This 177-nucleotide RNA was probed chemically with 2A3.

RNA sequence: GGGAACGACUCGAGUAGAGUCGAAAAUACCUCGCUUAAGGGAUGUGGGUGCCACGUCAGCGAAGAUUAAGUCAAAAGUGGUUUUGGAGGCCAAAACUGCCAAAGAUCCAAUACAUAGGAGGCUGUUCACAUCUAAUGCCUUCGGGCAUUAGAUGUGAAAAGAAACAACAACAACAAC
Reactivity to 2A3 in 0.01 (KOAc 150mM, MgCl2 10mM, bicine 150mM(pH8.5), 24C), signal-to-noise 1, nucleotides 027 to 126: u220a040c000c000u000c000g000c030u130u020a150a130g120g000g070a080u010g000u180g040g040g220u230g050c000c000a040c000g090u030c020a040g030c030g000a020a020g000a020u030u160a080a000g160u120c100a020a020a020a020g060u110g000g000u000u000u000u000g020g000a000g020g020c000c000a000a230a000a000c030u070g000c000c000a000a010a010g040a000u040c020c000a070a000u070a130c030a060u140a030g030g030a010g020g000c030u020g080u040u000